[RMDB]
RNA sequence: GGGAACGACUCGAGUAGAGUCGAAAAACUGAUACUUUAGCACCAUUGCAGAGAAAUGAAUUUUUGGAAAUCUGUACAAUUUUAGAAACUUGUGGGCUGGUUUCAAUCAAAAAGACAAAGUGUAAAGACAUAAUGAUCGUUUCGACGAUCAUUAUGUAAAAGAAACAACAACAACAAC
Reactivity to 2A3 in 0.01 (KOAc 150mM, MgCl2 10mM, bicine 150mM(pH8.5), 24C), signal-to-noise 2, nucleotides 027 to 126: a000c000u010g050a020u090a060c000u040u100u080a070g000c010a080c040c050a090u020u210g020c020a000g040a010g060a120a150a040u110g010a040a110u150u050u040u070u110g020g020a000a140a040u060c000u000g010u020a060c010a040a060u050u090u200u180a090g000a070a120a020c030u020u060g020u020g030g080g050c000u020g000g000u000u080u010c020a010a010u100c010a020a020a000a040a030g080a050c060a060a090a080g030u080g030u070a060a100a000g050
Reactivity to DMS in 0.01 (KOAc 150mM, MgCl2 10mM, bicine 150mM(pH8.5), 24C), signal-to-noise 3, nucleotides 027 to 126: a090c060u010g000a130u000a080c070u000u000u000a080g000c050a080c080c100a080u000u000g000c090a070g020a140g010a080a080a060u010g020a070a130u000u000u010u000u000g010g010a040a060a040u000c020u000g000u000a020c030a020a050u000u000u020u030a180g010a120a100a060c150u000u010g040u000g000g020g030c040u010g010g000u000u000u000c010a050a090u020c060a040a010a020a060a030g010a100c060a030a040a080g020u010g020u010a080a080a120g010